This 207-nucleotide RNA was probed chemically with 2A3. The RNA was probed in 150 mM KOAc, 10 mM MgCl2 and 150 mM bicine (pH 8.5) at 24 C. The data come from the RNA Mapping Database (RMDB), library OK3TST. For 2A3, 563 sequencing reads were counted.
[RMDB]
RNA sequence: GGGAACGACUCGAGUAGAGUCGAAAAGCGACCUCGCGGCCACCCGAGCCGGGGAGCGCAACGGGAUGCCCGAGGCGGACGUGGUGCUGGACGUGCGCACCAACAACGAGUUCCGGAACUCGCACGUCAGCGGCGCGGUGCACAUCCCGCUGUACGAUGUUACUUGGUGAUUCGUCACCAAGUAACAAAAAGAAACAACAACAACAAC
Reactivity to 2A3 in 0.01 (KOAc 150mM, MgCl2 10mM, bicine 150mM(pH8.5), 24C), signal-to-noise 1, nucleotides 027 to 156: g020c000g000a280c000c000u000c000g160c150g010g000c000c000a000c000c000c000g020a030g000c070c000g110g050g080g070a100g020c100g000c040a150a050c030g000g000g000a010u030g000c000c000c030g050a030g000g000c040g100g030a060c000g000u050g000g300u000g000c000u010g120g020a050c000g000u000g030c030g060c000a050c030c050a000a030c000a010a060c040g200a040g090u130u100c090c100g050g000a070a040c040u000c110g000c010a000c000g010u020c000a000g000c000g060g000c010g000c000g040g040u090g080c130a050c010a120u120c030c000c000g000c030u000g010u020a100c150g130a130